[RMDB]
Structure probing data (2A3 and DMS) for a 177-nucleotide construct. The RNA was probed in 150 mM KOAc, 10 mM MgCl2 and 150 mM bicine (pH 8.5) at 24 C. For DMS the reverse transcriptase was MarathonRT. DMS (dimethyl sulfate) methylates the pairing face of unpaired adenines and cytosines. 2A3 adducts were read by reverse transcription with SuperScript II with manganese. For 2A3, 8,068 sequencing reads were counted. Reactivities are given for positions 27 through 126.

RNA sequence: GGGAACGACUCGAGUAGAGUCGAAAAGAUAUGGAGAUCAUCGAUCAUGACUACGAAGAACUCGGAAACGAGGGAGUAGCCAUGGGAGAUCUCCUAAGUCAAACGUGUAUGCUUCGGCAUACACGAACUCUAUUAAGCCGUUCGCGGCUUAAUAGAGAAAAGAAACAACAACAACAAC
Reactivity to 2A3 in 0.01 (KOAc 150mM, MgCl2 10mM, bicine 150mM(pH8.5), 24C), signal-to-noise 4, nucleotides 027 to 126: g040a020u080a040u200g020g000a020g010a000u020c040a100u240c120g080a050u130c020a010u010g010a030c000u010a000c020g300a300a110g020a120a030c010u000c020g000g040a080a070a030c000g000a010g000g030g000a030g000u000a000g000c010c000a000u000g010g020g000a050g000a000u000c000u000c000c000u040a140a020g060u040c080a100a050a050c010g000u010g000u000a000u010g000c000u050u100c300g150g000c010a000u000a010c000a000c000g010a010a000
Reactivity to DMS in 0.01 (KOAc 150mM, MgCl2 10mM, bicine 150mM(pH8.5), 24C), signal-to-noise 3, nucleotides 027 to 126: g000a030u010a300u010g000g000a000g020a020u000c020a190u000c070g000a110u010c010a010u000g010a030c000u010a000c010g010a080a150g000a110a180c010u000c000g010g010a070a110a190c010g010a010g010g000g010a080g000u000a000g010c020c000a010u000g010g000g000a040g000a020u000c000u000c000c000u010a010a050g010u000c010a100a100a200c010g030u000g000u000a000u000g010c000u000u040c180g020g000c000a000u000a000c000a000c000g000a020a050